[RMDB]
RNA sequence: GGGAACGACUCGAGUAGAGUCGAAAAUGCGCUGACAUACUGGGCGCGCCAGGAUGAUUGACUGCCUGCUCAGGUAAAUAAGGGAUAUGAAUGAAACCGCCCUUAAUUUCGUCAUUUGUCUGAUGUAACUAUAUGAGAUUUUCGAAUCUCAUAUAGUAAAAGAAACAACAACAACAAC
Reactivity to DMS in 0.01 (KOAc 150mM, MgCl2 10mM, bicine 150mM(pH8.5), 24C), signal-to-noise 9, nucleotides 027 to 126: u010g010c020g010c020u000g010a120c110a140u010a120c150u000g010g000g010c020g010c050g010c090c060a170g000g000a060u000g010a070u000u000g010a070c040u000g010c020c010u000g010c160u010c140a040g010g020u000a040a060a100u000a020a020g000g000g010a080u010a070u010g010a080a100u010g010a070a100a120c160c140g000c010c000c000u000u000a020a070u000u000u010c130g010u000c020a040u000u000u000g010u000c030u000g010a110u010g010u010a100
Reactivity to 2A3 in 0.01 (KOAc 150mM, MgCl2 10mM, bicine 150mM(pH8.5), 24C), signal-to-noise 9, nucleotides 027 to 126: u090g000c020g020c020u060g050a060c030a120u270a150c110u170g050g010g020c010g000c000g000c020c000a030g020g020a020u060g010a020u040u090g030a030c010u040g010c010c010u050g030c060u100c140a010g030g020u050a040a060a040u040a020a030g050g000g010a040u070a080u300g150a200a030u090g070a130a050a010c040c030g020c010c010c000u020u010a060a100u070u130u120c030g010u000c020a020u030u020u050g030u000c020u030g070a090u080g070u090a050